Chemical mapping of a 207-nucleotide RNA with 2A3. Conditions: 150 mM KOAc, 10 mM MgCl2 and 150 mM bicine (pH 8.5), 24 C.

RNA sequence: GGGAACGACUCGAGUAGAGUCGAAAACUCAAUGUAGGGAAUAACAUUGAAUUGAUACAAAUACCUUUUUCGGUGUAGGGAAAAACACCGAAUUGAUUCAAAUACCUUUCUCAAUGUAGGGAAUAACAAAACAGGCAUCGCUUCGGCGAUGCCUGAACCUAUAUGGGCUGUUCGCAGCCCAUAUAGGAAAAGAAACAACAACAACAAC
Reactivity to 2A3 in 0.01 (KOAc 150mM, MgCl2 10mM, bicine 150mM(pH8.5), 24C), signal-to-noise 1, nucleotides 027 to 156: c020u060c000a000a010u110g020u100a160g000g170g040a050a270u100a150a000c000a010u000u000g010a000a050u060u070g020a110u160a280c040a040a210a080u220a040c010c000u090u040u000u000u000c010g000g010u000g000u000a000g000g040g060a070a070a070a060a060c000a000c010c020g000a000a000u000u000g000a000u050u050c000a000a000a090u170a100c000c000u020u060u080c050u120c090a050a110u170g040u050a010g040g030g030a010a100u090a090a040c060a010a100a010a000c000a000g000g030c040a000u000c000g050c010u100u020c150g150g000c000g000a000u000g000c030c000u000g000a000a000